[RMDB]
RNA sequence: GGGAACGACUCGAGUAGAGUCGAAAAUGGGCACUGUCUCAACCAGGCGCUCAGUGAAAUUGUAGUGGCGGUGAAGAUGCCGCCUACCCGCAGAAGGACGGAAAGACCCUAUAGACCUUAACUGUAACGUCUAAGCAGCGUUCGCGCUGCUUAGACGAAAAGAAACAACAACAACAAC
Reactivity to 2A3 in 0.01 (KOAc 150mM, MgCl2 10mM, bicine 150mM(pH8.5), 24C), signal-to-noise 1, nucleotides 027 to 126: u060g030g000g030c000a000c000u000g000u060c060u030c080a030a100c000c000a060g000g000c000g000c000u030c000a000g000u060g230a000a030a170u130u170g180u020a050g040u050g000g000c010g000g100u100g100a090a120g150a170u300g060c010c000g000c020c000u030a000c000c000c000g000c000a010g090a050a030g000g030a000c000g000g010a020a020a020g030a000c000c000c000u060a060u060a080g140a090c010c000u000u150a000a050c000u030g010u010a160a000
Chemical mapping of a 177-nucleotide RNA with 2A3. Reactivities are given for positions 27 through 126. 2A3 adducts were read by reverse transcription with SuperScript II with manganese. The 2A3 profile rests on 461 reads. It was measured as part of the RMDB library RFM100.